[RMDB]
RNA sequence: GGGAACGACUCGAGUAGAGUCGAAAAGAUAUGGAAUGCCUUAGGGAGAACGUGUGUCGGAAACGACACGAGUUCAUCGAUCUAAGGGCAUUCCUAAGUCAAACGCAUCAUGUUCGCAUGAUGCGAACCAUCUCACCAGCUUCGGCUGGUGAGAUGGAAAAGAAACAACAACAACAAC
Reactivity to DMS in 0.01 (KOAc 150mM, MgCl2 10mM, bicine 150mM(pH8.5), 24C), signal-to-noise 1, nucleotides 027 to 126: g010a050u000a300u000g010g010a010a000u000g020c000c000u000u000a010g010g000g010a080g000a030a020c010g010u000g020u000g020u010c000g030g020a120a050a180c000g020a050c010a000c010g030a040g000u020u000c020a250u050c140g000a120u020c010u010a020a060g030g010g010c000a010u000u000c000c000u010a000a080g000u010c010a100a080a210c010g030c000a000u000c010a030u000g000u010u040c250g030c000a000u000g000a030u000g010c000g000a040a100
Reactivity to 2A3 in 0.01 (KOAc 150mM, MgCl2 10mM, bicine 150mM(pH8.5), 24C), signal-to-noise 2, nucleotides 027 to 126: g010a030u060a040u130g010g000a000a000u000g000c010c010u040u000a020g030g110g000a250g000a060a000c040g210u150g000u000g040u230c000g010g000a040a050a100c000g020a000c000a000c000g000a010g030u000u000c080a220u300c060g100a100u020c020u050a010a050g090g020g000c000a000u000u000c000c000u000a040a010g000u020c090a140a070a040c010g000c010a000u020c000a000u000g060u040u090c300g020c150a020u040g000a010u010g040c010g000a020a000
An RNA of 177 nucleotides, treated with DMS and 2A3 and read out base by base. It was measured as part of the RMDB library TTRDES. For 2A3, 2,932 sequencing reads were counted. 2A3 adducts were read by reverse transcription with SuperScript II with manganese. DMS adducts were read by reverse transcription with MarathonRT. For DMS, 1,189 sequencing reads were counted. Conditions: 150 mM KOAc, 10 mM MgCl2 and 150 mM bicine (pH 8.5), 24 C.